[RMDB]
RNA sequence: GGGAACGACUCGAGUAGAGUCGAAAACAUGCGCGUGCUCGGGAGAUGAGGGUGUGUAUCUCAUACCUUGUCUCCACUGAGAUAUGGCCUCGUAUAUCCGAGUACGCACCGUUGGGAGACACGACGAUCUAGGCAUGCUGUUCGCGGCAUGUCUAGAAAAAGAAACAACAACAACAAC
Reactivity to 2A3 in 0.01 (KOAc 150mM, MgCl2 10mM, bicine 150mM(pH8.5), 24C), signal-to-noise 9, nucleotides 027 to 126: c050a060u230g030c060g000c000g060u000g000c000u000c000g010g020g020a150g030a080u200g030a050g020g040g030u210g040u070g010u110a030u000c010u010c010a040u140a200c020c030u080u120g030u030c020u000c020c000a020c010u020g000a000g010a000u000a010u010g100g030c010c000u040c040g100u130a090u020a020u140c000c000g000a000g000u000a000c000g000c000a010c000c010g030u040u040g070g000g000a050g010a010c030a000c050g060a020c040g020a030
Reactivity to DMS in 0.01 (KOAc 150mM, MgCl2 10mM, bicine 150mM(pH8.5), 24C), signal-to-noise 9, nucleotides 027 to 126: c080a090u060g010c150g010c000g020u000g010c000u000c000g000g010g000a060g020a030u030g000a020g010g000g020u040g020u020g010u000a010u000c020u000c000a040u020a120c140c090u020u020g010u010c010u000c010c030a050c180u000g000a020g000a010u000a000u000g010g000c000c010u000c020g010u010a070u060a040u020c000c000g010a010g000u000a000c010g010c020a020c060c130g010u000u010g000g010g000a050g000a100c160a030c070g000a130c300g000a110
Chemical mapping of a 177-nucleotide RNA with 2A3 and DMS. DMS adducts were read by reverse transcription with MarathonRT. It was measured as part of the RMDB library OK1LIB. The RNA was probed in 150 mM KOAc, 10 mM MgCl2 and 150 mM bicine (pH 8.5) at 24 C.